[RMDB]
RNA sequence: GGGAACGACUCGAGUAGAGUCGAAAAGCAGGCUUUGGACUGAGCGCUCUGGACCCAUUAAUGCAAGGUCUGACUCUUCCAGACUGAGAGACUGCUGAAGGAAGAAGCAGUGACCCACGGCUGAGUACAGUGGCCAGGGUUCCAGGGUACACAUCUAGUCAUUAUUAAUGUUCGCAUUAAUAAUGACAAAAGAAACAACAACAACAAC
Reactivity to DMS in 0.01 (KOAc 150mM, MgCl2 10mM, bicine 150mM(pH8.5), 24C), signal-to-noise 3, nucleotides 027 to 156: g000c040a080g000g000c060u010u000u000g010g010a100c050u000g020a080g050c050g030c030u040c040u000g010g010a070c010c010c020a240u000u000a100a110u020g030c130a160a120g000g020u000c030u020g000a120c040u000c030u000u000c050c020a160g000a110c060u000g000a130g000a110g010a100c010u000g000c010u010g010a130a150g010g000a120a080g020a190a060g000c000a020g010u010g000a120c040c010c010a050c050g030g010c030u000g000a130g010u010a070c060a040g020u000g010g000c000c020a140g030g030g020u000u000c010c010a050g010g010g000u000a030c040a090c050a060u000c040u000a280
Reactivity to 2A3 in 0.01 (KOAc 150mM, MgCl2 10mM, bicine 150mM(pH8.5), 24C), signal-to-noise 9, nucleotides 027 to 156: g030c030a020g060g020c050u140u150u200g060g040a060c050u060g030a030g050c040g000c010u000c000u000g000g010a010c000c000c010a050u100u250a120a070u200g060c090a070a060g020g010u010c010u010g030a090c010u010c010u070u010c020c000a080g020a170c060u060g010a020g010a010g010a130c010u020g000c010u030g050a110a070g100g030a050a060g030a030a010g000c000a010g010u030g110a170c000c010c030a030c050g010g000c010u020g010a010g060u090a130c040a040g030u080g080g010c020c030a040g000g000g000u120u040c000c000a000g000g000g010u080a030c050a010c000a050u110c040u080a030